[RMDB]
RNA sequence: GGGAACGACUCGAGUAGAGUCGAAAAGAAAAAGGAGGACAUGUCCGCCUGAUUGUGUCCGACCCUGUAGAUACUUCGCUCUGGAAAUUGUGCGGGACAACCGACGCGCGCAGCGAGCCGAAAAAAAGGAAUCUUCUUGAUUCGUCAAGAAGAUUCCAAAAGAAACAACAACAACAAC
Reactivity to DMS in 0.01 (KOAc 150mM, MgCl2 10mM, bicine 150mM(pH8.5), 24C), signal-to-noise 2, nucleotides 027 to 126: g000a060a080a050a130a060g000g000a300g010g010a040c040a030u000g010u010c000c190g000c140c110u000g010a070u000u000g020u010g010u000c020c020g010a190c090c010c010u000g020u020a140g000a110u000a070c130u000u010c050g020c020u000c020u010g010g000a070a070a090u000u000g040u000g010c030g000g020g010a080c070a040a090c120c040g000a100c060g010c030g030c040g070c060a040g020c040g020a040g000c050c020g000a010a010a020a110a030a040a130
Reactivity to 2A3 in 0.01 (KOAc 150mM, MgCl2 10mM, bicine 150mM(pH8.5), 24C), signal-to-noise 1, nucleotides 027 to 126: g020a000a070a010a010a000g000g030a020g020g020a000c000a030u030g000u020c010c070g070c030c130u110g010a120u060u130g000u000g000u000c000c020g060a130c070c000c020u020g080u090a080g050a140u050a100c000u040u040c030g020c040u010c040u090g090g100a090a150a110u140u090g010u050g020c020g050g000g000a030c060a150a010c060c000g030a050c000g000c010g000c000g010c020a010g050c030g040a010g000c080c050g080a000a000a000a000a000a000a000